[RMDB]
RNA sequence: GGGAACGACUCGAGUAGAGUCGAAAAGGCACUAUCUUCGGAUAGUGCCAAAACGGGAAAACGGCCUCCCGAAAACAAAAGAUCGAAACGAUCAAAAGGCCGAAAUCUCCCGGUUCGCCGGGAGAAAUCGAGAUUAAAGGUUCGCCUUUAAUCUCGAAAAAGAAACAACAACAACAAC
Reactivity to 2A3 in 0.01 (KOAc 150mM, MgCl2 10mM, bicine 150mM(pH8.5), 24C), signal-to-noise 1, nucleotides 027 to 126: g010g010c010a000c010u000a000u020c000u020u040c060g020g000a010u000a010g000u010g000c000c000a000a000a000a000c010g000g010g010a000a050a030a120c010g000g010c000c000u010c000c000c000g050a140a090a000a000c030a030a080a030a110g000a000u010c000g080a300a110a210c050g000a000u030c030a000a000a000a190g000g000c000c000g020a000a000a000u000c000u000c020c030c000g000g000u010u020c170g050c020c030g030g000g000a000g000a000a000a000
Reactivity to DMS in 0.01 (KOAc 150mM, MgCl2 10mM, bicine 150mM(pH8.5), 24C), signal-to-noise 1, nucleotides 027 to 126: g000g000c030a050c000u010a020u000c030u000u020c190g020g000a020u000a020g020u010g010c000c000a000a010a090a120c010g000g000g000a020a020a070a150c000g010g000c000c010u000c000c000c010g000a040a040a150a100c070a010a030a140a140g020a000u050c010g000a100a150a120c100g020a000u000c010a020a060a110a070g010g070c000c000g000a020a060a130u000c000u000c020c000c000g000g000u000u010c220g000c050c000g040g000g000a000g030a000a020a040